[RMDB]
RNA sequence: GGGAACGACUCGAGUAGAGUCGAAAAAGCCGUAGCACUGAUCUGUCUUUGGGUCAGGUGGGGUCAAACUCACAGCUACGACACUUACAAAGAAUCGGGAUCUAGCCGGGUCACACGCGUUAGGCCUUAAAAAGAAGUGAAUCGCUGAGGGCCGGCCCCAACAUGAAUGCUUCGGCAUUCAUGUUGGAAAAGAAACAACAACAACAAC
Reactivity to 2A3 in 0.01 (KOAc 150mM, MgCl2 10mM, bicine 150mM(pH8.5), 24C), signal-to-noise 1, nucleotides 027 to 156: a000g000c070c000g000u000a010g000c010a010c030u010g000a000u010c010u040g270u020c100u140u240u260g010g010g000u030c010a010g000g010u030g040g020g000g000u140c010a140a040a040c000u020c000a000c010a010g000c030u010a010c010g060a010c010a010c040u140u120a030c050a050a090a020g040a060a070u210c140g000g020g080a080u020c030u050a030g050c030c000g080g060g040u030c010a030c030a010c030g010c000g030u070u090a060g110g040c000c020u210u120a060a240a120a000a000g140a070a000g010u020g030a050a020u130c000g000c010u000g000a190g010g030g020c000c000g000g010c050c010